[RMDB]
Description:
The record gives the reactivity of an RNA of 207 nucleotides to 2A3 and DMS.
RNA sequence: GGGAACGACUCGAGUAGAGUCGAAAAACAUACGUUCGCGUAUGUAAAAAGCGUACUACUGAUGACCUACAGAGAGGACGAUAAGUUCUCCCAAAUAGGAGAACUUUUGACGUCUGGUUGUAGCAAGGUAUCGCAAAAAGUUAGCUUCGGCUAACAAGCGUUGUAAGACAUUCGUGUCUUACAACGCAAAAGAAACAACAACAACAAC
Reactivity to 2A3 in 0.01 (KOAc 150mM, MgCl2 10mM, bicine 150mM(pH8.5), 24C), signal-to-noise 4, nucleotides 027 to 156: a000c000a000u010a010c000g040u030u040c290g010c010g090u000a000u040g010u180a100a090a010a040a020g030c010g040u100a070c050u010a000c000u060g020a160u130g020a120c010c010u020a030c030a020g120a000g060a070g120g000a020c010g030a040u000a060a000g000u010u010c030u140c030c010c010a140a300a090u250a110g000g000a000g000a000a000c000u020u010u040u090g240a090c020g000u000c000u050g050g000u150u020g010u010a010g020c030a050a130g010g000u050a070u300c100g000c040a000a110a100a000a000g000u000u010a000g000c000u060u040c300g130g000c010u000a020a000c010a040a000
Reactivity to DMS in 0.01 (KOAc 150mM, MgCl2 10mM, bicine 150mM(pH8.5), 24C), signal-to-noise 2, nucleotides 027 to 156: a040c010a040u000a000c010g020u000u000c300g030c050g020u000a000u020g010u020a040a040a020a060a120g020c080g010u010a060c100u010a130c050u010g000a220u000g000a110c260c000u000a070c030a120g010a160g040a180g020g000a010c000g050a130u000a020a010g020u000u000c000u000c000c000c020a020a090a290u000a020g020g010a060g000a030a000c010u000u000u000u000g010a220c070g000u000c020u000g000g030u040u000g040u000a040g020c060a080a160g050g000u000a020u000c030g040c070a060a020a090a090a200g000u000u000a030g000c010u000u000c300g000g040c000u000a000a020c020a040a160
Record summary:
The 2A3 profile rests on 2,384 reads.